RNA sequence: GGGAACGACUCGAGUAGAGUCGAAAAGAUAUGGAAUGGUAGUCGACAUGCAGAAUGUAUCGGAAACGAUACACUGCAACAGCGGGAUCAAACAUUCCUAAGUCAAAGUGGUACUUCGGUACCACAACCUGAUCACUGUGUUCGCACAGUGAUCAGGAAAAGAAACAACAACAACAAC
Reactivity to DMS in 0.01 (KOAc 150mM, MgCl2 10mM, bicine 150mM(pH8.5), 24C), signal-to-noise 2, nucleotides 027 to 126: g000a010u020a300u030g010g010a020a000u000g010g000u010a190g000u010c010g020a030c110a200u000g010c020a030g000a170a110u010g000u000a000u000c000g030g000a100a090a110c000g000a000u000a000c000a040c000u000g000c010a040a040c220a080g020c100g030g000g010a030u000c060a090a100a120c010a000u000u000c000c000u000a060a180g000u000c050a040a080a150g010u000g000g010u000a000c000u000u000c140g030g000u020a010c000c000a000c000a000a050
Reactivity to 2A3 in 0.01 (KOAc 150mM, MgCl2 10mM, bicine 150mM(pH8.5), 24C), signal-to-noise 3, nucleotides 027 to 126: g020a000u070a000u110g000g000a010a010u010g000g110u200a080g120u060c070g060a190c080a170u240g000c030a000g080a300a250u060g010u000a010u010c010g010g000a060a020a000c020g000a000u000a000c000a010c000u000g010c030a070a010c020a070g160c070g050g110g020a070u180c120a080a260a070c010a000u000u010c000c000u030a130a020g010u040c060a200a020a000g010u010g010g000u000a000c010u020u050c300g060g000u000a010c000c000a000c000a010a010